[RMDB]
RNA sequence: GGGAACGACUCGAGUAGAGUCGAAAACGCGGGUAGAAGUGGAGACACUCUGAGCGCGCUGUACGCUGCGCCUAGGUGUUAUCCCUAGGGUGUUAGGCAGUGGUACUGUGACAGCCGUAAGGGAUGACGCCGAAUGUAGCUUCGGCUGCGUUCGGCGAAAAGAAACAACAACAACAAC
Reactivity to 2A3 in 0.01 (KOAc 150mM, MgCl2 10mM, bicine 150mM(pH8.5), 24C), signal-to-noise 9, nucleotides 027 to 126: c040g010c020g010g020g020u100a060g040a270a040g040u080g070g080a070g030a050c020a010c030u090c040u050g060a090g040c050g000c010g000c020u020g040u060a020c060g000c020u050g000c020g100c010c020u020a020g000g000u040g040u150u140a070u060c000c000c000u010a010g020g010g010u050g060u110u070a080g080g000c000a010g010u090g090g070u080a100c010u020g020u030g090a050c010a010g040c010c000g060u090a050a080g040g000g000a030u040g020a010
Reactivity to DMS in 0.01 (KOAc 150mM, MgCl2 10mM, bicine 150mM(pH8.5), 24C), signal-to-noise 9, nucleotides 027 to 126: c060g010c030g010g000g020u020a020g000a070a060g020u020g000g000a140g000a150c030a030c040u010c030u010g010a100g000c020g000c030g010c020u000g010u020a040c070g000c010u010g000c010g010c020c010u000a050g000g010u020g010u010u020a060u020c100c000c010u000a060g010g000g010u010g020u030u030a130g010g020c000a020g000u010g020g030u020a190c020u010g000u010g000a100c050a100g000c010c010g000u020a090a090g010g000g000a040u010g010a160

This 177-nucleotide RNA was probed chemically with 2A3 and DMS. The reactions ran in a buffer of 150 mM KOAc, 10 mM MgCl2 and 150 mM bicine (pH 8.5), at 24 C. For DMS the reverse transcriptase was MarathonRT. For 2A3 the reverse transcriptase was SuperScript II with manganese.